This 177-nucleotide RNA was probed chemically with 2A3 and DMS. Conditions: 150 mM KOAc, 10 mM MgCl2 and 150 mM bicine (pH 8.5), 24 C. For DMS the reverse transcriptase was MarathonRT.
[RMDB]
RNA sequence: GGGAACGACUCGAGUAGAGUCGAAAAAGCAGCUGGAUAUGACGUUACAACUCCAGUAGUAGUAACAAACUCCAAUCAAUAUUUAGACGUAAUGAUUACAGAUGCAAAAGAAGCAAAACUAGAAGAAGUAUUAGUCCUAUUUCGAUAGGACUAAUACAAAAGAAACAACAACAACAAC
Reactivity to 2A3 in 0.01 (KOAc 150mM, MgCl2 10mM, bicine 150mM(pH8.5), 24C), signal-to-noise 8, nucleotides 027 to 126: a000g090c070a010g010c030u040g010g010a030u040a050u220g070a040c090g020u030u070a040c030a090a020c090u020c060c110a020g020u070a010g000u010a000g010u020a080a020c050a070a090a030c080u040c030c000a030a070u050c040a060a030u090a140u210u210u160a130g020a070c070g030u050a080a100u090g070a020u030u110a040c030a040g100a040u070g030c010a060a080a030a060g090a050a050g000c060a050a090a090a080c050u100a080g040a160a020g030a140a020
Reactivity to DMS in 0.01 (KOAc 150mM, MgCl2 10mM, bicine 150mM(pH8.5), 24C), signal-to-noise 5, nucleotides 027 to 126: a040g010c040a020g000c050u000g020g020a100u020a070u010g010a230c170g000u000u010a050c050a050a050c030u000c010c160a110g000u060a020g000u000a050g020u020a040a040c020a070a100a150c110u000c080c070a050a070u030c070a040a070u020a030u000u010u010a120g000a140c170g020u030a040a040u000g010a050u000u000a140c060a000g030a040u000g000c060a080a060a050a060g020a050a050g020c090a060a020a030a030c120u030a090g010a090a090g000a090a090
It was measured as part of the RMDB library OK1LIB. The DMS profile rests on 7,444 reads.